Conditions: 150 mM KOAc, 10 mM MgCl2 and 150 mM bicine (pH 8.5), 24 C. Structure probing data (2A3 and DMS) for a 207-nucleotide construct. Values cover nucleotides 27 to 156. Source: RMDB library OK3TST, as collected in RNAgym. For DMS, 7,116 sequencing reads were counted. For DMS the reverse transcriptase was MarathonRT.
RNA sequence: GGGAACGACUCGAGUAGAGUCGAAAAAUAUCACAUCACAGAUUAUAGGACACUUUGACAUAUUAUCUCAGUUGAUCCUCACAGGAUCCGGGACUGUGGCUCAGAAAGGUUAUGAUUUGCUUAAAGUCACACAGCAAGCUGUAUUCAAUACCCACUGCUUGUGUAAAUACUUCGGUAUUUACACAAGAAAAGAAACAACAACAACAAC
Reactivity to 2A3 in 0.01 (KOAc 150mM, MgCl2 10mM, bicine 150mM(pH8.5), 24C), signal-to-noise 8, nucleotides 027 to 156: a010u150a040u120c040a030c030a070u070c030a050c030a070g080a050u090u100a070u210a180g040g030a040c030a020c090u080u050u090g040a040c050a050u160a090u200u180a090u090c030u010c020a030g030u050u050g090a060u000c000c010u040c030a080c020a090g000g020a020u000c010c040g020g000g010a010c010u020g010u050g040g010c010u010c030a010g100a070a080a010g060g000u060u080a040u110g060a080u030u030u110g030c030u050u120a050a070a040g040u100c000a010c010a000c000a060g010c010a040a030g030c020u030g020u040a080u050u110c030a040a050u090a190c020c000c030a060c050u100g000
Reactivity to DMS in 0.01 (KOAc 150mM, MgCl2 10mM, bicine 150mM(pH8.5), 24C), signal-to-noise 4, nucleotides 027 to 156: a110u000a060u000c040a050c030a160u010c050a110c040a120g010a140u000u000a110u010a070g010g010a070c030a050c030u000u000u000g000a040c040a120u000a090u000u000a060u000c020u010c060a080g040u000u010g020a110u010c010c010u000c190a160c110a170g000g010a040u000c010c060g000g030g000a040c040u000g000u000g030g010c050u000c050a090g020a080a080a040g020g010u000u000a050u000g010a070u000u000u000g000c050u020u010a060a060a080g010u000c040a070c110a090c060a070g020c040a040a060g020c040u000g010u010a090u000u000c060a070a100u000a090c020c000c000a100c190u000g000